RNA sequence: GGGAACGACUCGAGUAGAGUCGAAAAGAUAUGGAAUUGUAACGCGAUAAGCUGGUGUCGGAAACGACACCCAGCUUUUGACGCGUUAACAAUUCCUAAGUCAAAAGAUGGCAGUUCGCUGCCAUCACUGAUGAAGAUACUUCGGUAUCUUCAUCAGAAAAGAAACAACAACAACAAC
Reactivity to 2A3 in 0.01 (KOAc 150mM, MgCl2 10mM, bicine 150mM(pH8.5), 24C), signal-to-noise 3, nucleotides 027 to 126: g010a000u030a040u090g000g020a000a020u010u000g000u010a010a000c010g040c070g080a160u050a300a000g010c000u000g010g000u000g000u000c000g000g020a030a010a020c010g000a000c000a000c000c010c000a010g000c000u060u020u030u130g180a080c080g000c000g000u000u000a010a000c000a000a000u000u000c000c000u000a020a010g020u010c030a020a030a010a240g010a000u000g010g000c000a020g040u060u160c280g080c150u000g000c010c000a000u000c000a000
Reactivity to DMS in 0.01 (KOAc 150mM, MgCl2 10mM, bicine 150mM(pH8.5), 24C), signal-to-noise 5, nucleotides 027 to 126: g010a020u010a240u000g000g010a020a000u000u000g010u000a020a010c010g020c010g020a110u010a010a010g020c000u000g000g010u000g000u000c000g000g010a050a040a110c000g010a010c000a000c170c100c050a000g010c000u000u000u010u000g010a190c110g020c000g010u000u000a050a060c000a010a010u000u000c000c000u000a020a080g000u010c010a130a120a130a130g000a010u000g000g010c000a020g010u000u010c280g020c000u000g000c000c000a000u000c000a090
The record gives the reactivity of an RNA of 177 nucleotides to 2A3 and DMS. The 2A3 profile rests on 21,392 reads. The DMS profile rests on 11,484 reads.